[RMDB]
RNA sequence: GGGAACGACUCGAGUAGAGUCGAAAAGAUUAGGCAGAUAACAACUAUUACGCGUCUUGCCACUGUAUUGUAAAGUAAACAACAAGAUAUAAGUUUAAUAGACCUACGCGACAAGAUGAAUCAGCAAGUUUAAAUGAACUUUCGAGUUCAUUUAAACAAAAGAAACAACAACAACAAC
Reactivity to DMS in 0.01 (KOAc 150mM, MgCl2 10mM, bicine 150mM(pH8.5), 24C), signal-to-noise 6, nucleotides 027 to 126: g010a110u000u000a060g020g010c050a050g010a100u000a060a090c090a050a150c060u010a060u000u000a080c100g010c080g010u000c000u000u000g010c050c050a090c090u010g010u000a040u010u010g000u000a060a090a150g010u010a040a030a040c050a070a100c070a050a060g010a060u010a080u010a080a100g000u000u000u000a040a060u000a070g000a050c050c100u000a040c060g000c030g010a040c060a020a050g010a050u000g000a060a060u000c070a060g010c120a040a100
Reactivity to 2A3 in 0.01 (KOAc 150mM, MgCl2 10mM, bicine 150mM(pH8.5), 24C), signal-to-noise 5, nucleotides 027 to 126: g030a030u090u120a040g030g000c030a010g060a120u100a110a050c030a030a020c040u050a050u130u120a050c060g010c020g030u000c020u010u040g010c020c020a040c050u070g040u040a090u180u090g080u100a060a100a140g050u020a040a080a040c010a030a000c010a020a070g050a040u050a030u050a200a050g010u000u040u060a060a050u050a050g030a010c000c000u010a010c010g000c020g020a020c010a010a010g030a040u080g030a040a060u040c020a020g050c030a080a090

Chemical mapping of a 177-nucleotide RNA with DMS and 2A3. For 2A3, 7,707 sequencing reads were counted. The RNA was probed in 150 mM KOAc, 10 mM MgCl2 and 150 mM bicine (pH 8.5) at 24 C. Source: RMDB library M2PK90, as collected in RNAgym. The DMS profile rests on 6,367 reads.